[RMDB]
RNA sequence: GGGAACGACUCGAGUAGAGUCGAAAAGUGAGUUUGAUCAUGAUCUCAAUACUGUUGGCCCAGCAGGUAAAAUAUGAGGUGAAGUUAACUAGAUCACGUGGCGCUUUGCCAAAUUCAUGCACUGUGCUACUCCGCUAUUGUUCGCAAUAGCGGAGUAAAAAGAAACAACAACAACAAC
Reactivity to 2A3 in 0.01 (KOAc 150mM, MgCl2 10mM, bicine 150mM(pH8.5), 24C), signal-to-noise 1, nucleotides 027 to 126: g070u070g040a030g050u100u160u170g160a150u060c070a070u190g110a130u000c020u040c020a030a030u110a090c010u070g040u100u100g040g000c030c000c000a000g000c000a000g020g140u100a050a050a060a130u130a100u090g040a050g000g000u000g020a090a020g110u060u120a050a160c020u010a070g040a190u160c020a040c180g030u040g000g010c050g000c070u030u030u000g000c020c050a070a020a160u130u110c040a020u090g030c080a010c000u050g020u040g000c000
Reactivity to DMS in 0.01 (KOAc 150mM, MgCl2 10mM, bicine 150mM(pH8.5), 24C), signal-to-noise 2, nucleotides 027 to 126: g010u000g010a010g000u000u010u040g010a070u010c020a050u010g010a120u000c010u000c040a070a100u000a130c030u000g000u000u000g010g030c000c000c000a120g000c020a020g000g010u000a050a060a080a090u000a040u000g000a190g000g030u000g020a070a040g000u010u000a080a050c130u000a080g000a060u000c080a050c110g010u000g000g000c020g020c120u000u000u010g000c010c080a010a040a050u010u000c080a080u000g010c070a030c060u000g000u010g030c150